[RMDB]
RNA sequence: GGGAACGACUCGAGUAGAGUCGAAAAAACAAGAAGCUAUUUCUCCUCCUUUGUAAUAAAAACUUACUGAGGAUGAGUAAUUAUGUCUUAUUAGGACCAUAGAUGAUGCUGGGAGAUAUCAUCAGGUAGCGACUUAAUUACACAUACUCUUUGUGCAUAAAUAGUCAUCCUUCGGGAUGACUAUUUAAAAAGAAACAACAACAACAAC
Reactivity to 2A3 in 0.01 (KOAc 150mM, MgCl2 10mM, bicine 150mM(pH8.5), 24C), signal-to-noise 5, nucleotides 027 to 156: a010a000c110a040a020g140a060a010g050c050u090a060u070u080u010c010u000c010c010u010c000c000u060u040u080g010u010a020a030u040a120a180a050a040a050c020u020u040a010c010u040g010a000g010g000a010u040g010a020g020u010a000a010u040u030a030u050g030u000c010u070u220a240u180u220a100g090g060a030c020c010a050u070a090g000a010u010g000a010u020g020c050u060g050g070g030a070g020a030u080a010u050c010a010u020c010a010g030g020u040a040g150c030g060a010c020u030u070a030a020u080u090a010c040a000c020a070u120a110c030u040c000u070u070u060g090u060g010c030a030
Reactivity to DMS in 0.01 (KOAc 150mM, MgCl2 10mM, bicine 150mM(pH8.5), 24C), signal-to-noise 3, nucleotides 027 to 156: a110a070c030a070a090g010a060a080g030c030u010a050u000u010u000c020u000c030c030u010c050c030u010u000u030g000u000a070a080u020a060a050a100a120a090c170u000u010a040c040u000g010a040g000g000a010u000g010a100g000u000a010a020u000u000a030u010g000u010c020u000u000a200u000u010a170g050g000a130c020c010a120u000a150g000a030u010g010a020u000g030c040u000g020g030g000a150g000a290u000a030u000c000a010u000c020a120g020g010u000a070g020c080g010a080c020u000u000a010a060u010u000a010c020a050c020a040u000a040c050u000c040u000u010u010g000u000g010c070a180
Structure probing data (2A3 and DMS) for a 207-nucleotide construct. The DMS profile rests on 4,893 reads. The reactions ran in a buffer of 150 mM KOAc, 10 mM MgCl2 and 150 mM bicine (pH 8.5), at 24 C. For 2A3, 4,356 sequencing reads were counted.